[RMDB]
Chemical mapping of a 207-nucleotide RNA with 2A3. 2A3 adducts were read by reverse transcription with SuperScript II with manganese. The data come from the RNA Mapping Database (RMDB), library OK3TST.

RNA sequence: GGGAACGACUCGAGUAGAGUCGAAAAUAUAGGCGUUGAACCCAUGAUGCGCGAUGUAAUCGGUAUUUGCCGUUUAAUCAACAUUAAGCAUAUCGUUAGGUCGCAACAAACUGCAUUUGAUCUAGAUGGAACAUUACGUAAGGGUGCAAAGGACAACGGUUUGACCCUAAUUCGUUAGGGUCAAACCAAAAGAAACAACAACAACAAC
Reactivity to 2A3 in 0.01 (KOAc 150mM, MgCl2 10mM, bicine 150mM(pH8.5), 24C), signal-to-noise 1, nucleotides 027 to 156: u300a000u040a050g220g010c050g050u000u120g000a070a010c000c000c010a040u190g020a000u000g060c020g000c000g010a000u010g020u130a060a060u170c010g010g010u020a090u080u100u300g050c000c010g030u020u030u020a180a070u140c080a050a060c000a000u020u150a190a000g060c000a000u000a000u090c000g010u000u000a040g000g000u190c110g000c040a040a000c000a020a100a060c080u030g030c010a090u050u010u230g040a020u060c010u010a050g000a030u070g040g000a040a000c060a070u030u030a000c150g020u020a010a050g220g040g000u070g000c040a040a040a040g200g020a000c090a010a010c010